An RNA of 177 nucleotides, treated with DMS and 2A3 and read out base by base. The reactions ran in a buffer of 150 mM KOAc, 10 mM MgCl2 and 150 mM bicine (pH 8.5), at 24 C. As a SHAPE reagent, 2A3 marks flexible, mostly unpaired nucleotides at the ribose 2'-OH. Values cover nucleotides 27 to 126. The 2A3 profile rests on 898 reads.
RNA sequence: GGGAACGACUCGAGUAGAGUCGAAAAGGGUGAACAACUCGAAACCAGAGCAGCAAUAUAAUUUGCAAUGUGUAUACACGUUUGUUGCGGGAUCGAGGCAGCGUGUAAGGCUCGAAUUCGACCAUUAUCAGUAUCCCGAGUUCGCUCGGGAUACUGAAAAAGAAACAACAACAACAAC
Reactivity to DMS in 0.01 (KOAc 150mM, MgCl2 10mM, bicine 150mM(pH8.5), 24C), signal-to-noise 1, nucleotides 027 to 126: g030g000g020u000g000a120a070c170a090a040c050u010c010g010a120a080a180c000c040a150g000a050g000c020a100g000c030a000a030u010a220u000a160a100u010u000u000g010c040a140a100u020g000u010g010u020a180u000a030c000a030c000g010u000u010u000g050u000u000g000c000g000g010g030a180u010c030g020a300g020g000c050a000g000c030g050u000g000u000a050a140g020g000c010u010c050g000a080a120u000u000c050g010a050c040c030a210u020u000a050
Reactivity to 2A3 in 0.01 (KOAc 150mM, MgCl2 10mM, bicine 150mM(pH8.5), 24C), signal-to-noise 1, nucleotides 027 to 126: g000g000g000u010g000a090a070c040a060a010c110u000c040g020a090a030a000c010c000a010g040a030g040c040a000g000c010a050a000u070a000u040a300a300u140u090u040g000c000a070a170u090g060u010g080u160a080u010a130c000a000c020g020u000u240u170g000u030u040g010c000g090g030g020a300u050c010g000a030g030g020c010a000g000c010g010u010g000u040a150a040g130g020c010u010c060g000a070a090u110u000c000g000a000c000c020a030u190u020a080